[RMDB]
Description
This 177-nucleotide RNA was probed chemically with 2A3 and DMS. For DMS, 1,091 sequencing reads were counted.
RNA sequence: GGGAACGACUCGAGUAGAGUCGAAAAGUCUCUAUCUUCGGAUAGAGACAAAUAAAAGUACGACUUAGAGCUAGAUCAAUUAAUAUCGUCGACAUCGUAAAAAAAGAGGUAUGUUCGCAUACCUCAACUAUCUACGACUGUUCGCAGUCGUAGAUAGAAAAGAAACAACAACAACAAC
Reactivity to 2A3 in 0.01 (KOAc 150mM, MgCl2 10mM, bicine 150mM(pH8.5), 24C), signal-to-noise 2, nucleotides 027 to 126: g000u010c000u010c000u000a000u000c030u040u040c230g140g010a000u000a010g010a000g000a010c000a010a010a000u030a000a040a000a000g050u040a020c010g040a020c010u090u200a020g000a030g130c100u140a050g020a100u010c040a020a080u090u190a160a110u060a030u200c040g030u010c010g040a040c000a010u080c060g050u090a010a000a000a060a000a000a250g000a000g010g030u000a000u020g010u010u110c140g000c090a000u000a000c000c020u010c000a000a000
Reactivity to DMS in 0.01 (KOAc 150mM, MgCl2 10mM, bicine 150mM(pH8.5), 24C), signal-to-noise 2, nucleotides 027 to 126: g010u000c000u010c000u020a000u010c010u000u010c270g010g030a000u000a030g000a010g010a000c000a000a010a030u010a010a060a110a170g000u000a000c000g000a030c080u000u010a250g010a040g000c140u000a060g000a040u010c100a170a090u010u000a040a140u000a080u000c060g040u000c030g010a110c260a060u000c010g000u000a010a000a010a100a030a050a280g020a030g000g000u000a000u000g000u000u010c120g030c010a010u010a000c000c000u000c020a000a040
For 2A3 the reverse transcriptase was SuperScript II with manganese.